The record gives the reactivity of an RNA of 207 nucleotides to 2A3. 2A3 adducts were read by reverse transcription with SuperScript II with manganese.

RNA sequence: GGGAACGACUCGAGUAGAGUCGAAAAUUUGGGUGAUUCAAUUUUUCGUCCCUUACUUGUUCACUUUAAUUUUAGAUGCAAAAGCAUUAAAAAGAAGGACACGUGGUAUUAUUGGAUUAACUAUUCAAGCUGUGGUAAUCAUGGCUACUCUUUCUGACUAGUGAUCACCAUUCGUGGUGAUCACUAGAAAAGAAACAACAACAACAAC
Reactivity to 2A3 in 0.01 (KOAc 150mM, MgCl2 10mM, bicine 150mM(pH8.5), 24C), signal-to-noise 1, nucleotides 027 to 156: u100u080u030g010g000g020u040g050a030u070u030c030a030a040u060u070u110u090u180c100g070u120c020c010c000u050u120a100c030u030u050g070u060u090c040a030c120u060u030u090a100a170u080u090u060u060a140g020a010u000g000c050a130a130a270a240g000c000a020u030u080a000a130a000a020a000g100a010a040g030g010a000c000a000c080g060u060g000g020u100a000u100u010a020u000u090g000g000a010u030u000a050a050c030u080a090u110u250c110a050a000g000c000u010g030u000g020g100u140a070a000u270c000a020u080g010g000c010u030a000c000u040c000u020u020u010c030u040g030a010
Notes:
Reactivities are given for positions 27 through 156. For 2A3, 541 sequencing reads were counted.